[RMDB]
RNA sequence: GGGAACGACUCGAGUAGAGUCGAAAAGCCGACUGCACGUGCGUGCGAGCAGUUUUCGAAAUCGCAGGUUUCACGUAAAGACCCAACUCUACUCGAUGCGAGGGUCAGCAAGCAAGCAGCAAUAAAAUAGGUCACUAUUAUUCGUAAUAGUGACCUAAAAAGAAACAACAACAACAAC
Reactivity to DMS in 0.01 (KOAc 150mM, MgCl2 10mM, bicine 150mM(pH8.5), 24C), signal-to-noise 5, nucleotides 027 to 126: g010c040c050g000a110c040u010g000c030a110c030g030u010g020c150g020u000g000c030g020a080g030c040a060g000u010u010u010u000c080g010a070a080a060u000c050g030c090a080g000g010u010u010u000c050a040c080g000u010a040a080a090g000a070c020c020c010a090a080c020u000c000u010a020c000u010c000g010a020u010g000c050g000a100g010g010g000u000c030a100g000c060a060a060g010c060a050a080g000c050a040g000c080a100a100u010a030a050a090a110
Reactivity to 2A3 in 0.01 (KOAc 150mM, MgCl2 10mM, bicine 150mM(pH8.5), 24C), signal-to-noise 3, nucleotides 027 to 126: g070c030c030g060a070c020u030g010c030a000c050g070u170g080c060g090u120g020c010g020a020g050c020a020g020u000u010u050u190c050g070a050a070a140u120c040g030c060a000g010g050u000u100u140c060a040c060g040u090a020a040a090g030a020c000c000c000a030a040c000u010c000u010a010c000u010c000g020a040u090g000c010g020a090g010g020g000u010c010a000g020c000a040a030g030c010a020a050g000c010a010g020c020a060a100u130a160a100a040a060